[RMDB]
RNA sequence: GGGAACGACUCGAGUAGAGUCGAAAACAAUUUUCAAAUAUCAGGAACCUUCACAUGUGUACUGAUAAAUGAUAGACAGACAAUAUGUAGAUACUUAGCAUCUCUUAUGCACAGUGGUUUUAUAUUUUUCUUGCUAUUCUACAGCUAAAGAUUUUAAACCAUCACUAAAUUUCGAUUUAGUGAUGGUAAAAGAAACAACAACAACAAC
Reactivity to DMS in 0.01 (KOAc 150mM, MgCl2 10mM, bicine 150mM(pH8.5), 24C), signal-to-noise 2, nucleotides 027 to 156: c050a040a090u010u020u010u000c000a060a060a300u000a030u010c050a030g000g020a160a080c070c040u010u030c210a160c160a120u010g030u000g050u000a090c000u000g000a050u000a000a060a300u010g020a060u010a090g000a170c050a130g000a100c050a050a120u000a100u000g000u000a050g010a070u000a030c140u010u010a120g020c030a050u000c040u010c030u000u000a080u010g000c070a070c080a140g020u000g000g000u000u000u000u010a080u000a050u030u000u000u000u010c020u010u010g000c010u000a070u000u000c020u010a020c030a090g000c070u000a080a060a140g000a130u000u010u000u000a000a150
Reactivity to 2A3 in 0.01 (KOAc 150mM, MgCl2 10mM, bicine 150mM(pH8.5), 24C), signal-to-noise 4, nucleotides 027 to 156: c030a040a060u060u090u100u100c030a030a020a020u030a010u040c010a010g030g060a100a070c030c030u220u200c160a100c130a240u140g120u020g040u120a020c010u000g000a020u010a010a040a020u020g020a010u030a050g100a030c080a030g090a020c060a120a070u080a060u210g040u050a000g010a030u060a110c060u090u060a050g010c010a050u020c050u000c030u250u150a040u110g000c030a030c020a050g040u040g010g050u080u090u090u010a090u050a050u060u140u020u060u000c030u040u030g000c000u010a070u050u030c010u060a040c020a020g000c020u080a090a090a030g030a070u060u100u080u130a080a150
This 207-nucleotide RNA was probed chemically with DMS and 2A3. For DMS the reverse transcriptase was MarathonRT. Source: RMDB library OK3TST, as collected in RNAgym. For DMS, 2,968 sequencing reads were counted. Values are in units of 0.01, from 0 to 300, in steps of 10.